[RMDB]
Chemical mapping of a 177-nucleotide RNA with 2A3 and DMS.
RNA sequence: GGGAACGACUCGAGUAGAGUCGAAAACUUGAAGGAUAUUAUGCGUGGCUAGCGUUUUUGUCCUUCACGUACGCCGCUCAGUUCCACCCUGAGCUGUUUGGUAUAGGAAAUGUCAGCCGCGUUUAUGCAGUGUUCUAUAUUUCGAUAUAGAACACUGAAAAGAAACAACAACAACAAC
Reactivity to 2A3 in 0.01 (KOAc 150mM, MgCl2 10mM, bicine 150mM(pH8.5), 24C), signal-to-noise 9, nucleotides 027 to 126: c020u050u090g050a070a030g090g040a050u070a100u290u110a080u220g010c010g010u020g040g060c060u040a070g020c020g040u020u020u010u110u180g080u030c000c000u020u030c030a010c020g040u030a020c030g010c030c010g000c000u010c010a020g000u220u120c060c050a060c020c020c010u010g010a000g000c010u010g030u010u100u110g060g000u050a060u080a100g080g060a060a060a040u090g050u070c030a010g010c010c000g020c020g030u030u080u040a100u090g040
Reactivity to DMS in 0.01 (KOAc 150mM, MgCl2 10mM, bicine 150mM(pH8.5), 24C), signal-to-noise 9, nucleotides 027 to 126: c040u000u010g010a050a040g000g010a060u000a050u010u000a030u000g000c000g020u000g010g020c050u000a110g020c020g010u000u000u000u000u010g010u000c010c000u000u000c080a030c080g020u000a060c180g010c040c080g000c010u000c000a020g000u000u010c090c110a110c180c190c010u000g000a030g010c010u000g010u000u010u000g020g020u000a080u000a090g010g010a040a060a050u000g010u000c050a040g010c010c020g010c060g010u000u000u000a050u010g010

Source: RMDB library OK2TRN, as collected in RNAgym. The DMS profile rests on 40,017 reads.